[RMDB]
RNA sequence: GGGAACGACUCGAGUAGAGUCGAAAAAUACAUACUGACACCGGUUGCUCAACAGGCUGUGUGGGACAAUAGAAUAACAAGGCUGUCAAUUUGAGCUUGACUGCUGCAAACCGAAUGGAGUGAAAUCGUAACCGGACUCACUUCGGUGAGUCCGGAAACCUUAAUGUAUCUUCGGAUACAUUAAGGUAAAAGAAACAACAACAACAAC
Reactivity to 2A3 in 0.01 (KOAc 150mM, MgCl2 10mM, bicine 150mM(pH8.5), 24C), signal-to-noise 1, nucleotides 027 to 156: a000u160a020c030a040u150a100c030u070g080a050c020a030c060c050g000g000u000u030g020c020u000c020a000a100c070a130g050g050c030u030g020u020g010u020g130g000g050a000c020a010a050u180a130g080a120a050u200a170a000c090a050a050g170g000c000u020g050u050c000a040a050u090u120u290g020a110g050c000u000u020g050a020c000u050g030c000u000g050c000a000a040a110c060c000g070a020a070u050g020g050a050g090u080g060a050a090a000u100c110g030u070a000a110c000c010g000g000a000c000u000c000a000c000u000u010c000g000g040u040g010a010g000u000c020c030g000g000a000a000
Reactivity to DMS in 0.01 (KOAc 150mM, MgCl2 10mM, bicine 150mM(pH8.5), 24C), signal-to-noise 1, nucleotides 027 to 156: a120u010a070c060a040u000a230c060u010g020a140c020a110c070c060g060g000u000u010g090c050u000c090a020a090c070a000g020g020c050u000g020u020g070u030g030g020g000a090c040a040a120u020a110g010a090a130u020a130a080c050a160a120g000g000c010u000g020u010c050a030a070u010u000u030g000a040g060c100u000u010g000a090c050u000g000c000u000g050c020a060a110a040c050c000g000a090a080u000g020g000a100g050u020g000a110a060a160u000c020g050u000a120a200c020c000g000g020a040c010u020c010a010c000u000u030c280g040g000u000g010a020g010u000c020c020g000g000a000a000
Source: RMDB library M2RFPK, as collected in RNAgym. The record gives the reactivity of an RNA of 207 nucleotides to 2A3 and DMS. DMS adducts were read by reverse transcription with MarathonRT. For 2A3 the reverse transcriptase was SuperScript II with manganese. For DMS, 1,641 sequencing reads were counted. The reactions ran in a buffer of 150 mM KOAc, 10 mM MgCl2 and 150 mM bicine (pH 8.5), at 24 C. Reactivities are given for positions 27 through 156.